[RMDB]
The record gives the reactivity of an RNA of 207 nucleotides to 2A3 and DMS. For 2A3, 1,983 sequencing reads were counted.

RNA sequence: GGGAACGACUCGAGUAGAGUCGAAAAACGAGUCCGUACGCGGACUCGAAGGGCCCCAGAAGACCAAGGGGCCCAAACCUACCACUCAUGAGAUGCAUGGAAAUCACUAGGUGAUACGUCACCUAGAACACGCUUUUAAGCUUCGGCUUAAAAGCAACUAACUCUUGAACUUCGGUUCAAGAGUUAGAAAAGAAACAACAACAACAAC
Reactivity to 2A3 in 0.01 (KOAc 150mM, MgCl2 10mM, bicine 150mM(pH8.5), 24C), signal-to-noise 3, nucleotides 027 to 156: a000c010g000a000g010u000c010c000g020u020a030c280g010c030g060g020a000c010u000c000g000a000a020g000g000g000c000c000c000c000a090g110a300a020g100a190c070c070a130a060g000g010g000g000c010c000c010a000a000a000c000c000u020a010c000c040a070c040u130c010a040u090g040a020g030a130u120g110c080a030u070g020g100a090a100a090u140c050a070c060u000a000g000g010u000g000a010u020a050c260g020u000c020a000c000c000u000a000g000a010a020c040a020c080g000c000u000u000u000u000a000a000g000c010u020u120c250g070g000c000u000u000a000a000a000a010g000c000a000a000
Reactivity to DMS in 0.01 (KOAc 150mM, MgCl2 10mM, bicine 150mM(pH8.5), 24C), signal-to-noise 1, nucleotides 027 to 156: a100c040g010a020g070u000c000c030g080u000a070c230g050c030g060g030a020c020u020c010g000a040a060g000g040g030c040c000c000c010a200g000a160a160g060a120c210c050a060a180g010g040g060g090c010c000c010a020a000a030c020c000u000a130c050c020a140c030u000c040a090u000g000a200g050a120u010g030c000a050u000g000g030a100a060a050u010c050a130c030u000a000g010g010u000g030a000u000a020c300g050u000c000a000c000c000u000a030g000a030a020c070a120c120g000c020u000u000u000u000a050a020g030c000u000u010c260g070g050c000u000u000a000a010a030a000g000c000a010a040
For DMS, 1,587 sequencing reads were counted.
DMS adducts were read by reverse transcription with MarathonRT.